[RMDB]
RNA sequence: GGGAACGACUCGAGUAGAGUCGAAAAGUACGUUGACGGGGAAUGAGUUGACCCCGAGCUCACGGGCGGAUAGUGCCAUGUCGAUGCGGUCUUCCAUGGACUCGCCAAGCCCUAGGAUUCCGCCGGAAAGUUUUCCUUCAUUCGUGAAGGAAAACUUAAAAGAAACAACAACAACAAC
Reactivity to DMS in 0.01 (KOAc 150mM, MgCl2 10mM, bicine 150mM(pH8.5), 24C), signal-to-noise 2, nucleotides 027 to 126: g010u020a040c040g000u000u000g020a160c020g000g000g010g020a140a090u030g010a090g030u010u020g010a300c030c000c000c000g000a070g010c070u010c070a110c130g030g000g010c020g000g000a050u000a060g020u020g010c020c080a060u000g010u010c110g000a130u010g010c070g000g010u010c070u020u010c070c080a040u000g020g000a070c000u000c100g020c060c090a080a170g010c020c010c020u000a130g020g010a230u000u010c020c030g030c020c020g010g000a100

Notes: The record gives the reactivity of an RNA of 177 nucleotides to DMS. The reactions ran in a buffer of 150 mM KOAc, 10 mM MgCl2 and 150 mM bicine (pH 8.5), at 24 C.